[RMDB]
RNA sequence: GGGAACGACUCGAGUAGAGUCGAAAACCAGCUCGAAGAAGCGUAGCUAAUUUAUCUUAGAAAAUCAUGGAUUUGAAAAAGCUACGCUUCUCGAGAAGGUGCAUGAACAAGUUGAUGCAUAUUUUGAAAGGAAAGAAGACUUCGGUCUUCUUUCCUUAAAAGAAACAACAACAACAAC
Reactivity to DMS in 0.01 (KOAc 150mM, MgCl2 10mM, bicine 150mM(pH8.5), 24C), signal-to-noise 3, nucleotides 027 to 126: c000c030a160g000c020u000c000g020a070a050g040a020a020g020c000g000u000a000g010c000u030a040a290u000u000u000a050u020c020u010u020a220g010a080a120a070a100u040c080a220u060g000g000a000u000u030u010g000a010a090a010a150a020g030c000u000a000c000g020c010u000u000c000u000c000g010a010g000a070a070g000g000u000g000c040a020u000g030a070a060c220a080a100g030u010u000g020a030u000g020c010a030u000a120u000u000u020u010g010a240